[RMDB]
RNA sequence: GGGAACGACUCGAGUAGAGUCGAAAACGUCGGGGGCGGUGAGACAGGCGGGAGGCCGGCCUCCAGUGGCUGGCGUGUACGAGUGGAGGCUGGCCUCCACUCACGCGUACAACGCGCGUACGAAUCGCGGAGCGAAAAACUUCGGUUUUUCGCUCCGAAAAGAAACAACAACAACAAC
Reactivity to DMS in 0.01 (KOAc 150mM, MgCl2 10mM, bicine 150mM(pH8.5), 24C), signal-to-noise 1, nucleotides 027 to 126: c130g010u000c070g020g030g000g000g030c020g010g030u050g000a090g000a020c110a140g030g040c050g020g080g010a020g020g050c070c000g000g030c000c000u020c030c000a040g000u030g000g000c010u000g000g000c040g000u000g050u070a070c000g040a220g070u000g000g020a010g000g000c000u000g000g020c000c000u000c000c020a030c050u020c180a000c030g000c040g000u020a050c070a050a180c200g000c040g020c040g050u000a050c020g030a260a150u020c260g040
Reactivity to 2A3 in 0.01 (KOAc 150mM, MgCl2 10mM, bicine 150mM(pH8.5), 24C), signal-to-noise 2, nucleotides 027 to 126: c050g060u080c030g010g000g020g090g020c000g030g030u050g020a050g000a030c060a020g070g050c080g070g000g000a000g000g000c000c000g000g000c000c000u000c000c000a020g090u080g110g030c040u060g080g010c060g070u070g050u090a100c060g050a150g190u100g010g000a000g000g000c000u000g000g000c000c000u000c000c000a000c000u020c000a010c000g080c000g000u030a070c040a130a040c090g000c000g000c000g010u020a030c100g110a100a020u070c020g000